[RMDB]
RNA sequence: GGGAACGACUCGAGUAGAGUCGAAAAGAUAUGGAAUCAGUAGGGAGGCAGUCGGAAACGACUGGCCAUCGAUCUACGAUUCCUAAGUCAAAACGUCGAAGACGAGGUUCGCCUCGUCUUCGACGAAUCUUCUAGCUAAGUUCGCUUAGCUAGAAGAAAAAGAAACAACAACAACAAC
Reactivity to DMS in 0.01 (KOAc 150mM, MgCl2 10mM, bicine 150mM(pH8.5), 24C), signal-to-noise 3, nucleotides 027 to 126: g000a050u000a300u010g010g010a030a010u000c000a080g030u000a010g000g000g000a040g000g000c010a010g020u000c000g010g000a130a090a230c010g010a020c000u000g030g020c000c000a160u010c090g000a050u000c000u000a010c000g000a050u000u000c000c000u000a040a080g000u000c050a060a050a120a190c030g000u010c000g000a020a030g000a030c000g010a010g000g000u000u010c250g000c010c000u000c000g000u000c000u000u000c010g010a000c010g020a010a010
Reactivity to 2A3 in 0.01 (KOAc 150mM, MgCl2 10mM, bicine 150mM(pH8.5), 24C), signal-to-noise 2, nucleotides 027 to 126: g010a000u070a030u140g010g010a010a020u040c080a190g020u000a010g030g010g000a010g000g020c000a010g010u000c000g030g000a090a040a030c000g020a000c000u040g160g050c000c000a130u290c020g010a030u020c010u010a020c000g000a000u010u010c000c000u000a130a010g030u000c020a040a000a090a180c020g020u040c000g040a020a000g000a000c050g010a010g050g010u090u260c250g040c000c000u020c000g010u000c000u030u000c010g000a000c000g010a000a000